[RMDB]
RNA sequence: GGGAACGACUCGAGUAGAGUCGAAAAGGGGGGCCGGUGGAGCCAUGGGAUGCUCCUCCCGAUUCCGUCCAUCCCCCCCCCCAGGAGGUCCCCCCAGGAAUGGCGGGACCCCACUCUGCAGGGUCCGGUAUCCGUGACUUCGGUCACGGAAAAAGAAACAACAACAACAAC
Reactivity to DMS in 0.01 (KOAc 150mM, MgCl2 10mM, bicine 150mM(pH8.5), 24C), signal-to-noise 4, nucleotides 027 to 129: g020g000g030g000g000g010c290c120g000g040u000g030g000a030g000c030c070a100u110g000g010g010a300u000g020c000u000c010c020u010c130c000c020g000a140u040u020c040c030g040u020c050c000a250u030c000c000c000c000c000c000c000c000c000c000a230g010g000a150g050g000u000c000c040c000c090c030c060a010g010g010a170a050u020g020g050c300g120g040g030a000c030c010c050c030a020c020u010c000u000g030c030a110g020g000g020u040c000c000g020g000u070a200
Reactivity to 2A3 in 0.01 (KOAc 150mM, MgCl2 10mM, bicine 150mM(pH8.5), 24C), signal-to-noise 3, nucleotides 027 to 129: g000g010g000g010g020g000c020c000g010g000u000g010g000a010g030c020c050a230u170g070g030g010a090u120g000c000u000c030c000u000c030c000c000g010a010u080u050c020c030g140u010c000c000a020u070c030c000c000c010c000c000c020c020c010c030a060g050g020a170g000g000u000c000c000c010c000c000c000a010g020g180a180a060u050g010g000c020g000g000g000a010c000c000c000c030a010c000u040c000u000g000c000a040g000g020g000u020c000c020g030g000u090a090

This 170-nucleotide RNA was probed chemically with DMS and 2A3.
For DMS, 9,344 sequencing reads were counted.